Conditions: 150 mM KOAc, 10 mM MgCl2 and 150 mM bicine (pH 8.5), 24 C.
Chemical mapping of a 177-nucleotide RNA with 2A3.
For 2A3 the reverse transcriptase was SuperScript II with manganese.
As a SHAPE reagent, 2A3 marks flexible, mostly unpaired nucleotides at the ribose 2'-OH.
RNA sequence: GGGAACGACUCGAGUAGAGUCGAAAAAUCCACAGCUACUGGUCUGCAGCUGUUCUUAUGUAACAGUUGUGGCAUUCCUCUGUGGGAAAGAAACUGUUAACACAGUUAAAUACCUCUUUCUUAGCAACCGAGGAUGUGUUUUCGAACACAUCCUCGGAAAAGAAACAACAACAACAAC
Reactivity to 2A3 in 0.01 (KOAc 150mM, MgCl2 10mM, bicine 150mM(pH8.5), 24C), signal-to-noise 2, nucleotides 027 to 126: a010u000c000c000a030c000a010g030c030u100a040c030u080g140g000u030c000u000g000c000a000g000c000u000g010u010u000c000u080u300a270u280g060u200a000a000c000a000g000u000u010g030u000g040g000c020a020u020u010c000c020u000c020u010g010u030g000g000g130a000a040a050g110a020a060a010c050u090g020u140u110a130a020c150a000c000a060g000u000u020a090a110a060u180a030c000c000u100c000u140u060u000c000u000u030a050g030c030a090a060